This 177-nucleotide RNA was probed chemically with DMS and 2A3. The 2A3 profile rests on 6,473 reads. The RNA was probed in 150 mM KOAc, 10 mM MgCl2 and 150 mM bicine (pH 8.5) at 24 C. For DMS, 3,374 sequencing reads were counted. It was measured as part of the RMDB library TTRDES. For 2A3 the reverse transcriptase was SuperScript II with manganese.
RNA sequence: GGGAACGACUCGAGUAGAGUCGAAAAGAUAUGGACUGGUCGUCAGACCAACAGCCUAGGUCGGAAACGACCUAGGACAUGGUCGACGCCAGUCCUAAGUCAAAAGCCCGUCCUUCGGGACGGGCAACACGAUAUAUGGGUUCGCCCAUAUAUCGUGAAAAGAAACAACAACAACAAC
Reactivity to DMS in 0.01 (KOAc 150mM, MgCl2 10mM, bicine 150mM(pH8.5), 24C), signal-to-noise 3, nucleotides 027 to 126: g000a050u010a300u000g000g000a020c000u000g000g000u000c070g020u000c010a190g020a020c010c020a020a080c250a240g010c020c000u010a010g010g020u010c000g010g000a160a140a270c010g000a010c000c000u000a000g000g030a020c050a070u000g000g010u010c000g020a020c020g000c020c000a000g000u000c000c000u010a000a080g000u020c040a100a110a140a220g010c000c000c000g020u000c000c010u010u020c270g000g000g000a010c000g010g010g020c010a010a010
Reactivity to 2A3 in 0.01 (KOAc 150mM, MgCl2 10mM, bicine 150mM(pH8.5), 24C), signal-to-noise 3, nucleotides 027 to 126: g010a020u090a070u150g000g000a010c010u000g030g060u300c100g010u020c120a130g000a000c010c020a040a090c090a040g010c020c000u000a000g000g020u020c010g010g030a060a070a080c010g000a000c000c020u020a000g020g000a000c010a010u020g000g000u000c010g000a000c000g030c000c010a000g010u000c000c010u010a000a000g010u000c000a030a040a090a060g010c030c010c010g030u020c000c040u050u170c300g110g020g000a000c000g030g000g000c000a000a010